[RMDB]
This 177-nucleotide RNA was probed chemically with DMS and 2A3.
For 2A3, 60,725 sequencing reads were counted.
Reactivities are given for positions 27 through 126.
The RNA was probed in 150 mM KOAc, 10 mM MgCl2 and 150 mM bicine (pH 8.5) at 24 C.
RNA sequence: GGGAACGACUCGAGUAGAGUCGAAAAGAUAUGGACAUUAUCACGCUUUUGACGCUUCCUACUCGGAAACGAGUAGCGAAGCGAUAAGCGUAUAAUGUCCUAAGUCAAACCAAGCUUCGGCUUGGAACAUGUUAUUUACGUUCGCGUAAAUAACAUGAAAAGAAACAACAACAACAAC
Reactivity to DMS in 0.01 (KOAc 150mM, MgCl2 10mM, bicine 150mM(pH8.5), 24C), signal-to-noise 9, nucleotides 027 to 126: g010a040u000a300u010g010g010a010c000a000u000u000a000u000c220a010c010g010c000u000u000u010u010g030a250c070g010c000u000u000c000c000u000a000c000u000c000g000g000a120a100a200c000g010a010g010u000a000g000c210g010a010a000g020c000g020a010u000a010a020g010c000g020u000a010u000a000a000u000g000u000c000c000u000a010a050g010u000c040a130a150a240c000c000a010a000g010c000u000u010c230g030g000c010u000u000g000g000a080a200
Reactivity to 2A3 in 0.01 (KOAc 150mM, MgCl2 10mM, bicine 150mM(pH8.5), 24C), signal-to-noise 9, nucleotides 027 to 126: g040a030u070a050u160g000g000a000c000a000u000u030a010u070c160a010c080g020c030u090u180u180u300g300a140c040g000c000u040u000c000c010u010a010c000u000c010g000g020a040a090a070c000g000a000g000u000a000g010c120g030a000a010g000c000g000a000u000a010a000g000c000g000u000a000u000a000a010u000g000u000c000c000u000a010a000g000u000c020a020a050a130c000c000a010a000g000c010u080u270c300g200g000c000u000u010g000g010a010a020